[RMDB]
RNA sequence: GGGAACGACUCGAGUAGAGUCGAAAAGAUAUGGAUAGGAGAGAGAAGUCCGUUGAAAUCGGAAACGAUGGAGGAUGGUCUCGCGAAACUAUCCUAAGUCAAAGCACGUCCGUUCGCGGACGUGCAACUCACGACUGAUGUUCGCAUCAGUCGUGAGAAAAGAAACAACAACAACAAC
Reactivity to DMS in 0.01 (KOAc 150mM, MgCl2 10mM, bicine 150mM(pH8.5), 24C), signal-to-noise 1, nucleotides 027 to 126: g040a020u000a300u010g020g000a020u020a010g010g030a200g000a080g000a040g000a200a300g010u020c020c000g010u000u000g000a140a090a030u000c000g000g000a160a090a120c010g000a010u000g000g010a100g020g000a000u000g000g000u000c010u010c010g000c190g000a120a110a090c020u010a010u020c000c000u000a010a130g020u010c010a080a040a100g000c000a010c010g030u000c000c010g010u000u020c220g020c000g000g010a010c000g000u000g000c010a000a030
Reactivity to 2A3 in 0.01 (KOAc 150mM, MgCl2 10mM, bicine 150mM(pH8.5), 24C), signal-to-noise 1, nucleotides 027 to 126: g020a000u070a040u130g000g000a020u030a010g080g070a180g030a010g010a010g050a160a080g000u030c020c000g050u170u010g070a030a040a000u000c000g030g000a040a010a040c050g000a010u010g030g030a030g020g020a020u070g130g180u070c010u000c010g000c000g060a100a080a000c040u010a010u000c000c010u020a220a000g050u090c040a060a060a060g000c010a000c010g000u050c000c000g030u070u110c300g000c000g160g000a000c000g000u030g000c020a000a000
The record gives the reactivity of an RNA of 177 nucleotides to DMS and 2A3. 2A3 adducts were read by reverse transcription with SuperScript II with manganese. It was measured as part of the RMDB library TTRDEL. For DMS, 803 sequencing reads were counted. The reactions ran in a buffer of 150 mM KOAc, 10 mM MgCl2 and 150 mM bicine (pH 8.5), at 24 C. For 2A3, 1,399 sequencing reads were counted.